[RMDB]
RNA sequence: GGGAACGACUCGAGUAGAGUCGAAAAGUGUGGUUCUUGUGGUAGUGUUGGUUACACCAAGGAGGGUAGUGUGAUCAAUUUCUGUUACAUGCAUCAAAUGGAACUUGCUAAUGGUACACAUACCGGUAAAGCUGACUCUUCGGAGUCAGCAAAAGAAACAACAACAACAAC
Reactivity to DMS in 0.01 (KOAc 150mM, MgCl2 10mM, bicine 150mM(pH8.5), 24C), signal-to-noise 4, nucleotides 027 to 129: g050u060g020u030g010g030u010u010c030u020u030g090u020g030g040u000a030g000u040g060u030u020g040g010u000u000a040c100a110c050c060a160a110g070g010a050g060g010g040u060a100g030u020g000u030g010a010u030c030a020a100u010u080u050c030u000g000u000u040a060c050a060u030g030c000a080u030c160a040a090a090u090g040g030a020a080c020u010u060g020c040u060a000a000u040g030g020u030a090c140a070c100a060u070a050c060c010g060g060u060a080a040a100
Reactivity to 2A3 in 0.01 (KOAc 150mM, MgCl2 10mM, bicine 150mM(pH8.5), 24C), signal-to-noise 4, nucleotides 027 to 129: g060u090g030u030g030g000u070u030c020u050u080g000u040g050g020u010a010g010u030g000u040u000g000g030u010u010a030c060a030c020c040a080a080g120g010a060g010g110g000u080a070g010u020g000u000g040a030u000c000a020a020u040u190u050c010u000g000u000u030a030c010a010u040g060c010a060u020c020a020a090a100u130g060g010a020a030c020u010u070g010c000u090a070a010u120g010g000u060a010c080a000c010a080u090a050c030c020g000g160u170a060a030a010
Background:
An RNA of 170 nucleotides, treated with DMS and 2A3 and read out base by base. For DMS, 6,799 sequencing reads were counted. It was measured as part of the RMDB library 15KLIB. For 2A3 the reverse transcriptase was SuperScript II with manganese. For DMS the reverse transcriptase was MarathonRT.